An RNA of 207 nucleotides, treated with DMS and 2A3 and read out base by base. Values cover nucleotides 27 to 156. The RNA was probed in 150 mM KOAc, 10 mM MgCl2 and 150 mM bicine (pH 8.5) at 24 C.

RNA sequence: GGGAACGACUCGAGUAGAGUCGAAAAGAUUAUGUGGGAGAUGCGCCCAGUCGUGUCACUGGAAACAGAAUUGCGAGUCGCUCGCACUAGCGAUAUUGAUGUGUACUGUAGCGUACACUGUGCUACUUUAAGGUAUAAUGACGAUACCACGUCAAAAACCCUCAGUAUGGUUCGCCAUACUGAGGGUAAAAGAAACAACAACAACAAC
Reactivity to DMS in 0.01 (KOAc 150mM, MgCl2 10mM, bicine 150mM(pH8.5), 24C), signal-to-noise 1, nucleotides 027 to 156: g010a110u000u020a010u010g050u010g000g000g000a070g040a110u000g000c070g020c020c000c010a040g050u000c010g030u000g000u000c040a140c030u020g030g020a170a090a260c050a130g000a080a110u000u000g030c000g020a000g000u000c000g010c040u010c040g000c020a070c110u000a090g020c040g010a050u000a050u000u030g020a100u000g000u010g050u000a030c060u020g030u000a070g010c080g000u010a100c030a050c010u010g040u000g020c010u000a060c060u000u000u000a130a100g100g040u000a110u010a020a060u020g020a120c030g000a150u010a120c010c060a090c060g000u000c060a040a080a120a070
Reactivity to 2A3 in 0.01 (KOAc 150mM, MgCl2 10mM, bicine 150mM(pH8.5), 24C), signal-to-noise 3, nucleotides 027 to 156: g050a050u190u130a020u110g030u110g000g030g000a100g000a040u040g010c000g050c000c050c030a020g040u070c030g040u020g110u130c020a020c040u020g010g020a040a060a010c030a030g040a220a210u070u150g010c040g000a000g000u100c000g010c040u000c030g000c040a030c010u050a000g020c020g060a050u030a050u150u130g080a130u070g000u000g000u020a000c040u040g140u270a030g040c020g020u040a000c020a010c020u010g020u010g000c000u000a080c020u100u130u100a070a020g050g020u130a080u030a180a070u070g000a010c000g000a000u000a050c030c010a030c030g010u010c000a040a000a000a040
For 2A3 the reverse transcriptase was SuperScript II with manganese.